[RMDB]
RNA sequence: GGGAACGACUCGAGUAGAGUCGAAAAGAAUAAGUUUUGCGUAACCGUUAAGUACAUCUGCCUUUAACGACAAAUCAUUGUCAGCUUUAUCUAACGCAAUACGUGCAUCAUAUAGUGCAUCUUCUGCUGCAUACAAUGCAGCUUGUGCCUUAGCAGCGAGGAAGGAACGUUUCGACGUUCCUUCCUCAAAAGAAACAACAACAACAAC
Reactivity to 2A3 in 0.01 (KOAc 150mM, MgCl2 10mM, bicine 150mM(pH8.5), 24C), signal-to-noise 2, nucleotides 027 to 156: g140a040a080u140a000a060g000u000u030u010u070g000c000g080u080a000a050c030c050g060u000u030a070a030g000u040a010c050a060u020c070u130g040c140c050u240u100u110a200a220c200g110a080c130a030a030a000u080c020a040u130u070g010u000c020a000g000c020u050u080u050a080u080c080u080a020a000c000g010c000a010a010u100a060c040g000u040g000c010a050u050c000a000u280a030u080a200g040u030g120c110a060u070c080u170u000c060u090g000c000u010g000c000a000u120a150c070a000a300u060g050c010a010g000c040u070u010g000u000g000c000c020u010u070a100g080c010a050g000c050